[RMDB]
RNA sequence: GGGAACGACUCGAGUAGAGUCGAAAAGUUUAUCCAAAGGCACUUCGCAAUGUGUGCUCAAACAUUGCUUAUUCAAACACGCUUCACAAUGUGCGACAAAGAAACAUUGUUAUAAGAGCUAAUGUUUACCACGCCUAAAGGUUCGCCUUUAGGCGAACCAACCAGAUUACUUCGGUAAUCUGGUUGGAAAAGAAACAACAACAACAAC
Reactivity to DMS in 0.01 (KOAc 150mM, MgCl2 10mM, bicine 150mM(pH8.5), 24C), signal-to-noise 2, nucleotides 027 to 156: g030u000u000u000a060u030c010c010a070a160a130g030g030c040a070c040u000u000c170g000c070a070a070u000g050u000g040u020g040c020u010c070a160a100a060c010a030u000u000g020c010u000u010a140u000u020c050a070a140a060c050a090c060g030c070u000u000c070a120c110a060a050u000g020u000g010c070g010a190c090a090a090a100g010a160a080a030c010a030u010u000g010u000u010a120u000a110a020g000a080g010c060u000a070a170u000g000u000u000u000a100c100c110a160c030g020c010c000u000a010a040a020g020g030u000u000c300g040c050c000u010u010u000a040g040g030c000g010a000a050
Reactivity to 2A3 in 0.01 (KOAc 150mM, MgCl2 10mM, bicine 150mM(pH8.5), 24C), signal-to-noise 5, nucleotides 027 to 156: g030u050u110u100a170u110c020c030a070a040a030g180g000c000a010c030u040u020c050g000c000a000a010u010g010u020g010u030g060c120u170c290a050a030a000c000a010u000u000g010c020u100u140a190u190u170c080a030a080a010c070a010c100g000c000u040u020c020a000c010a010a010u020g000u020g020c020g060a090c160a070a190a060g110a020a080a010c000a010u000u000g030u070u070a150u050a100a080g030a000g040c080u080a160a040u090g010u010u020u020a160c100c050a040c030g000c000c000u010a000a000a000g050g010u030u060c190g130c030c000u000u000u000a010g000g000c000g000a000a000